[RMDB]
RNA sequence: GGGAACGACUCGAGUAGAGUCGAAAACGUAGGAGAGAGGGCCGCGGUGCUCUGGAGUAGAGGCUUCUUGCUUCGAAACACCAUCGAUCGUCCCUUCUUCUUUACCUCCUCCUGGCUCUUGCUGAGACGCCGACCGGUGGCAUCACCUCUCGGUUGCCAACAAGGUCAAGUUCGCUUGACCUUGUUGAAAAGAAACAACAACAACAAC
Reactivity to 2A3 in 0.01 (KOAc 150mM, MgCl2 10mM, bicine 150mM(pH8.5), 24C), signal-to-noise 3, nucleotides 027 to 156: c040g050u040a000g020g000a000g010a020g000a040g000g000g000c010c000g050c030g030g010u000g000c000u000c000u020g000g000a000g000u000a000g000a000g000g030c020u150u060c110u280u300g000c000u020u000c030g020a000a000a000c000a020c090c020a000u000c000g070a300u040c000g000u010c010c000c000u010u030c000u000u000c000u000u010u050a040c010c010u040c000c020u010c000c030u020g030g010c030u020c030u100u160g030c040u070g030a020g010a120c080g030c040c010g030a030c000c020g040g020u020g020g020c050a110u180c020a050c010c000u010c010u040c020g020g020u040u050g020c000
Reactivity to DMS in 0.01 (KOAc 150mM, MgCl2 10mM, bicine 150mM(pH8.5), 24C), signal-to-noise 1, nucleotides 027 to 156: c050g030u000a010g030g000a050g000a090g020a090g010g030g010c090c050g030c040g040g000u000g000c060u020c000u020g010g010a210g010u000a090g020a070g020g020c050u000u000c220u010u020g000c000u030u000c030g000a300a150a290c010a060c120c010a030u000c000g020a120u000c030g000u000c000c010c010u010u070c000u000u000c030u030u010u010a090c010c020u020c030c000u000c030c050u000g000g020c040u000c050u000u000g000c010u000g000a180g000a110c050g000c000c000g000a030c020c030g040g100u000g000g000c130a140u010c030a050c020c030u000c000u020c000g070g050u000u020g030c050